[RMDB]
Structure probing data (DMS and 2A3) for a 177-nucleotide construct. 2A3 adducts were read by reverse transcription with SuperScript II with manganese. For DMS, 7,034 sequencing reads were counted. Reactivities are rounded to 0.1 and cut off at 0 and 3. The reactions ran in a buffer of 150 mM KOAc, 10 mM MgCl2 and 150 mM bicine (pH 8.5), at 24 C. Source: RMDB library OK1LIB, as collected in RNAgym.

RNA sequence: GGGAACGACUCGAGUAGAGUCGAAAACUUCGAAAGCAAAGAAGAUCUGUCGGGAAACGGAGUGCGCGGCACCGUCCGCGGAACAAACGGAGAAGGCAGCUCCACCCCAAAGACAAGCAACGUCGAACCUGAUCGGUCAGUUCGCUGACUGAUCAGGAAAAGAAACAACAACAACAAC
Reactivity to DMS in 0.01 (KOAc 150mM, MgCl2 10mM, bicine 150mM(pH8.5), 24C), signal-to-noise 4, nucleotides 027 to 126: c020u000u010c030g010a120a100a150g000c130a090a110a180g000a040a050g000a070u020c040u020g000u010c020g000g000g000a190a120a090c060g000g000a020g050u010g000c000g000c010g000g010c030a120c130c220g010u000c020c020g000c000g040g030a090a040c040a020a110a060c050g040g000a030g000a300a120g000g000c020a060g040c090u010c020c030a120c020c000c000c030a060a120a030g010a010c040a100a100g000c070a110a120c140g000u010c040g000a080a150
Reactivity to 2A3 in 0.01 (KOAc 150mM, MgCl2 10mM, bicine 150mM(pH8.5), 24C), signal-to-noise 8, nucleotides 027 to 126: c010u030u020c020g090a140a080a050g090c080a140a090a060g060a080a010g020a130u040c020u050g060u030c030g060g010g030a100a060a040c040g020g010a020g030u050g040c020g000c000g020g000c070a090c180c070g070u090c010c010g010c010g020g050a030a010c010a020a130a000c030g010g010a080g050a090a020g100g030c030a020g010c010u000c010c010a050c010c020c000c010a040a100a000g050a020c040a050a060g030c020a090a040c050g050u050c020g020a040a050